[RMDB]
RNA sequence: GGGAACGACUCGAGUAGAGUCGAAAAGUUUACGUUAUCUGUGGUAGAACCUUAACUUUCUCUGUACUAGAUGACGACGUUUCACGUUAACACAUUGUUCUGUGCUAAUGGAUGGGGAAAGCAGGAGAUAUACCUCAGGGUUCGCCCUGAGGUAUAUAAAAGAAACAACAACAACAAC
Reactivity to DMS in 0.01 (KOAc 150mM, MgCl2 10mM, bicine 150mM(pH8.5), 24C), signal-to-noise 4, nucleotides 027 to 126: g010u010u030u020a050c110g000u000u000a030u010c020u000g020u000g000g040u020a090g000a080a190c040c010u000u020a100a120c110u020u000u000c020u000c020u010g010u010a060c070u010a060g000a090u010g010a070c090g010a080c140g010u000u040u010c070a100c020g020u010u000a050a130c050a030c040a020u030u030g010u030u040c150u010g010u010g010c050u010a020a040u010g000g010a020u010g000g000g020g010a050a010a020g030c060a040g000g010a100g000
Reactivity to 2A3 in 0.01 (KOAc 150mM, MgCl2 10mM, bicine 150mM(pH8.5), 24C), signal-to-noise 5, nucleotides 027 to 126: g040u050u070u070a070c080g000u040u040a100u080c050u100g090u070g050g040u090a070g070a160a070c010c000u050u090a040a040c000u040u020u000c010u000c010u030g030u050a130c020u030a040g100a160u090g010a060c080g020a020c040g020u050u090u130c140a060c040g000u010u030a050a010c020a010c020a120u080u130g070u280u100c060u070g030u040g010c010u020a070a080u060g020g040a040u110g020g030g010g020a000a000a000g020c030a010g010g100a080g050